[RMDB]
This 177-nucleotide RNA was probed chemically with 2A3 and DMS. The data come from the RNA Mapping Database (RMDB), library OK2TRN. For DMS, 1,342 sequencing reads were counted. For 2A3 the reverse transcriptase was SuperScript II with manganese. Conditions: 150 mM KOAc, 10 mM MgCl2 and 150 mM bicine (pH 8.5), 24 C.
RNA sequence: GGGAACGACUCGAGUAGAGUCGAAAAGUAGCAUCUAAUUAUCUCAUUGAGUCUCAUGCCAACGCUCAUUUCCUAAUUGUCGGAGGUGCAAUUUGGCAUGAGAGGCGUUGGGAUGACUCAAUGCUGAGCAGUGCAGACUAUUCGUAGUCUGCACUGCAAAAGAAACAACAACAACAAC
Reactivity to 2A3 in 0.01 (KOAc 150mM, MgCl2 10mM, bicine 150mM(pH8.5), 24C), signal-to-noise 2, nucleotides 027 to 126: g060u040a000g020c030a010u080c080u090a130a090u200u150a110u100c040u000c040a010u000u040g010a010g060u000c020u020c040a000u040g110c000c000a010a000c010g000c020u020c020a030u020u060u080c010c000u030a030a030u030u090g040u010c050g200g200a150g050g130u160g000c000a000a030u010u000u020g010g000c000a000u050g020a010g000a010g050g000c020g010u000u010g010g020g010a010u030g030a010c010u020c010a000a000u010g020c040u040g040a030
Reactivity to DMS in 0.01 (KOAc 150mM, MgCl2 10mM, bicine 150mM(pH8.5), 24C), signal-to-noise 2, nucleotides 027 to 126: g020u010a060g000c130a010u000c080u000a100a120u010u000a110u000c030u010c000a020u030u000g000a010g000u010c080u000c020a010u000g000c000c000a000a000c170g010c050u000c010a090u000u010u010c010c010u000a030a040u000u000g030u010c110g050g010a140g010g050u010g020c040a030a050u000u000u000g000g000c300a020u000g000a070g000a150g010g010c010g010u000u000g000g000g000a030u000g000a020c010u010c010a040a010u000g020c090u000g000a140